[RMDB]
RNA sequence: GGGAACGACUCGAGUAGAGUCGAAAAAGCGAUCCGUGCAGGAUGGUGAUGCCACCGCUCGGGUGGAUCGGGUUUGCCAACGCACGUAGCACCUUGCCAUCUGGAUCCGGCGGGGUGAUGGCAGCCAGUACUCGAUCCCGUUCGCGGGAUCGAGUACAAAAGAAACAACAACAACAAC
Reactivity to 2A3 in 0.01 (KOAc 150mM, MgCl2 10mM, bicine 150mM(pH8.5), 24C), signal-to-noise 2, nucleotides 027 to 126: a020g110c040g010a020u000c000c010g020u050g000c060a070g040g120a160u040g030g070u110g070a070u230g140c000c000a000c000c000g030c200u250c040g080g000g020u030g000g010a010u020c040g040g080g000u120u220u140g000c000c020a020a040c010g160c020a010c090g080u110a000g020c000a010c000c000u000u000g000c000c010a060u150c120u080g210g030a090u000c070c010g000g070c000g000g000g000g000u000g040a040u050g010g000c000a000g040c020c010a000
Description: This 177-nucleotide RNA was probed chemically with 2A3. The 2A3 profile rests on 803 reads. The data come from the RNA Mapping Database (RMDB), library OK1LIB.